[RMDB]
RNA sequence: GGGAACGACUCGAGUAGAGUCGAAAAGAAGCAGUCCUUAUUGUGUGUGAUGUUUAGUCAUCGCACUGUUCCUACGGGCUGCCAACGUAGGUCCAAUGUGCCGAGAGGCACUAGAAGUACGGCUUAUUAUGAAGCAUCGCCGUACCAACGAUGCUGAAUAAUCCCUAAUAUUCGUAUUAGGGAUUAUAAAAGAAACAACAACAACAAC
Reactivity to 2A3 in 0.01 (KOAc 150mM, MgCl2 10mM, bicine 150mM(pH8.5), 24C), signal-to-noise 8, nucleotides 027 to 156: g160a050a010g000c010a000g010u030c020c020u110u120a230u240u190g110u000g000u000g010u010g050a020u010g100u050u210u220a240g120u150c000a000u010c000g000c000a000c010u020g040u040u080c010c000u020a030c030g000g000g000c020u010g000c010c000a040a010c050g050u060a010g030g020u020c020c020a080a090u130g000u000g000c000c000g030a040g000a050g030g010c000a000c010u020a020g030a100a020g030u060a020c030g010g010c030u050u050a050u110u060a120u270g170a060a010g020c030a010u030c020g010c030c030g070u050a070c010c000a000a030c010g010a010u020g000c000u030g010a010
Reactivity to DMS in 0.01 (KOAc 150mM, MgCl2 10mM, bicine 150mM(pH8.5), 24C), signal-to-noise 6, nucleotides 027 to 156: g010a100a070g010c000a030g010u000c010c020u000u010a100u010u010g020u000g030u000g020u000g020a020u000g030u000u010u000a240g020u000c020a010u000c000g030c000a020c010u010g010u000u000c040c030u000a110c120g020g020g020c030u000g010c030c070a040a030c040g010u000a000g010g020u000c030c030a090a170u000g020u000g010c000c000g000a300g010a300g020g020c010a010c010u000a080g010a080a080g010u000a050c040g020g000c090u000u000a110u010u000a130u010g020a170a070g010c010a020u000c030g000c000c040g000u000a130c080c020a040a020c010g010a020u000g010c010u000g000a140